RNA sequence: GGGAACGACUCGAGUAGAGUCGAAAAGAUCUCUAACAGCACCGCUGUCGCAUACUCUUCGGAGUAUGGUCUUCGGACCGACAGCGAGUAGGCGAAAGGUGCUGUAGAAGCCUACGUGAGAUCGAAAGGGACACAGUGCCUUCGGGUGCUGUGUCCCAAAAGAAACAACAACAACAAC
Reactivity to 2A3 in 0.01 (KOAc 150mM, MgCl2 10mM, bicine 150mM(pH8.5), 24C), signal-to-noise 6, nucleotides 027 to 126: g000a000u000c010u000c010u010a050a010c000a000g000c000a000c000c000g000c010u000g000u020c010g020c060a010u000a010c000u000c010u030u100c220g110g000a010g000u010a010u010g020g010u000c010u030u080c200g130g010a020c020c010g010a010c000a000g000c010g010a000g000u010a000g000g020c070g030a040a000a000g010g000u010g000c000u000g000u010a020g040a050a000g070c000c010u020a010c020g080u090g000a000g000a000u000c000g000a090a050a020
Reactivity to DMS in 0.01 (KOAc 150mM, MgCl2 10mM, bicine 150mM(pH8.5), 24C), signal-to-noise 4, nucleotides 027 to 126: g010a010u010c000u000c000u000a140a050c010a000g010c000a000c000c020g020c040u010g010u010c010g000c080a020u000a000c020u010c020u010u060c150g000g000a010g010u000a000u000g010g000u000c000u000u060c150g030g000a020c100c040g010a020c000a000g010c030g000a040g010u010a010g010g000c070g010a040a030a300g000g000u000g000c000u010g010u010a160g020a070a080g020c000c000u000a010c030g000u010g020a010g000a010u000c020g010a070a100a140

Structure probing data (2A3 and DMS) for a 177-nucleotide construct. It was measured as part of the RMDB library OK1LIB. For 2A3, 9,701 sequencing reads were counted. The DMS profile rests on 12,285 reads.